[RMDB]
RNA sequence: GGGAACGACUCGAGUAGAGUCGAAAAUAUGAUGAAUGACACCAAGAGUUGGCUGAUGGCAACAUGAAAGGACACGUGCAAGACCUGAAAAGGUCACUUGUAGGGCACGCAGACGCAAGCAAAAAGCUACACCCUUUCCGUUCGCGGAAAGGGUGUAAAAAGAAACAACAACAACAAC
Reactivity to DMS in 0.01 (KOAc 150mM, MgCl2 10mM, bicine 150mM(pH8.5), 24C), signal-to-noise 1, nucleotides 027 to 126: u000a000u000g000a020u000g000a010a160u030g000a010c160a020c010c040a200a120g000a170g000u010u000g000g150c000u010g000a070u000g160g000c080a220a150c060a000u030g040a000a000a000g000g000a090c290a110c070g000u000g000c070a090a020g000a020c000c000u000g070a000a080a200a060g000g050u000c000a000c130u090u050g000u000a070g020g000g000c000a000c030g000c120a010g010a090c000g020c080a040a030g000c000a020a150a080a040a050g080c090
Overview: Structure probing data (DMS) for a 177-nucleotide construct. Conditions: 150 mM KOAc, 10 mM MgCl2 and 150 mM bicine (pH 8.5), 24 C. For DMS, 1,134 sequencing reads were counted.